The data come from the RNA Mapping Database (RMDB), library PDB130. This 207-nucleotide RNA was probed chemically with DMS and 2A3. The 2A3 profile rests on 1,577 reads. Conditions: 150 mM KOAc, 10 mM MgCl2 and 150 mM bicine (pH 8.5), 24 C.
[RMDB]
RNA sequence: GGGAACGACUCGAGUAGAGUCGAAAACUUGGAUGGUGAUGCAUGGCCGUUUUUAGUUCGUGAAUAUGAUUUGUCUGGUUAAUUCCGAUAACGAACGAGAUCUUAACCUGCUAAUUAGCGGCGAGUACACUAUAUUCUUAUUUGAAAUUGAACAUAGCGUAAAUGUUUGGUUCGCCAAACAUUUACGAAAAGAAACAACAACAACAAC
Reactivity to DMS in 0.01 (KOAc 150mM, MgCl2 10mM, bicine 150mM(pH8.5), 24C), signal-to-noise 2, nucleotides 027 to 156: c060u000u000g040g010a090u000g020g020u000g000a070u010g030c050a100u000g010g020c000c030g030u000u000u000u000u000a030g040u000u010c020g010u000g000a150a140u000a070u010g010a150u000u000u000g000u000c020u010g030g020u000u000a030a170u000u010c090c120g000a140u010a050a050c050g010a040a020c030g020a110g000a060u000c030u000u010a120a050c070c020u000g020c000u010a040a060u000u000a080g030c000g010g040c010g000a060g060u000a100c030a090c000u010a050u010a070u000u010c030u010u000a160u010u000u010g030a040a070a120u000u000g000a050a040c010a070u010a060g020
Reactivity to 2A3 in 0.01 (KOAc 150mM, MgCl2 10mM, bicine 150mM(pH8.5), 24C), signal-to-noise 3, nucleotides 027 to 156: c020u050u090g010g030a010u010g010g030u040g050a090u030g040c030a020u080g090g000c000c020g010u020u010u040u040u060a030g010u010u090c060g010u030g080a160a070u160a120u140g080a070u090u060u050g080u010c020u040g060g000u010u040a030a020u190u090c040c020g030a090u080a170a070c120g020a030a010c030g010a030g010a040u010c010u020u030a020a030c000c000u020g000c010u040a020a040u080u050a090g010c000g000g000c000g010a010g000u030a010c020a020c020u000a010u020a020u210u030c030u050u050a170u130u070u090g050a070a110a050u090u090g020a040a010c040a090u070a070g120